[RMDB]
RNA sequence: GGGAACGACUCGAGUAGAGUCGAAAAUUGCAUGUUAGCAAUAACAAAUGCUUAAAUGGUGCUAUGUGCUAGAUACUCUUCUAAGCCCUGUUAUGUAUAUUAACUAAUUUUUUAAAUUACACAAAUCAGAGAGGUUAAGUAACUUGCCCAAGAUUACAUUUGAAUAGGAGUUCGCUCCUAUUCAAAUAAAAGAAACAACAACAACAAC
Reactivity to DMS in 0.01 (KOAc 150mM, MgCl2 10mM, bicine 150mM(pH8.5), 24C), signal-to-noise 1, nucleotides 027 to 156: u000u020g000c010a070u010g010u000u010a090g040c060a040a060u000a070a130c040a080a140a100u000g010c060u010u010a080a140a140u000g000g010u020g010c010u010a000u020g020u020g030c010u000a060g000a200u000a050c020u000c070u000u020c030u000a080a220g020c020c040c020u010g010u010u020a030u000g000u000a000u010a180u000u020a030a280c030u040a080a020u010u020u010u000u000u010a030a010a300u000u010a050c000a020c010a010a070a090u000c020a070g000a140g010a160g040g020u000u010a020a120g010u000a080a030c010u000u000g010c010c020c010a010a120g020a130u000u010a050c060
Reactivity to 2A3 in 0.01 (KOAc 150mM, MgCl2 10mM, bicine 150mM(pH8.5), 24C), signal-to-noise 2, nucleotides 027 to 156: u140u040g000c020a000u070g040u080u060a020g020c000a000a060u060a080a010c050a040a110a090u090g010c000u120u170a060a060a130u140g020g020u040g030c010u040a070u160g030u000g000c010u010a010g010a080u080a080c040u020c000u200u060c100u100a090a130g020c010c000c000u000g040u080u100a070u080g030u000a130u040a060u280u050a090a020c000u060a070a300u070u030u060u000u020u150a050a070a080u070u260a020c010a010c010a010a170a030u150c030a010g060a050g020a030g060g000u050u040a080a000g030u000a060a090c040u040u100g020c010c010c010a060a040g030a070u100u170a030c050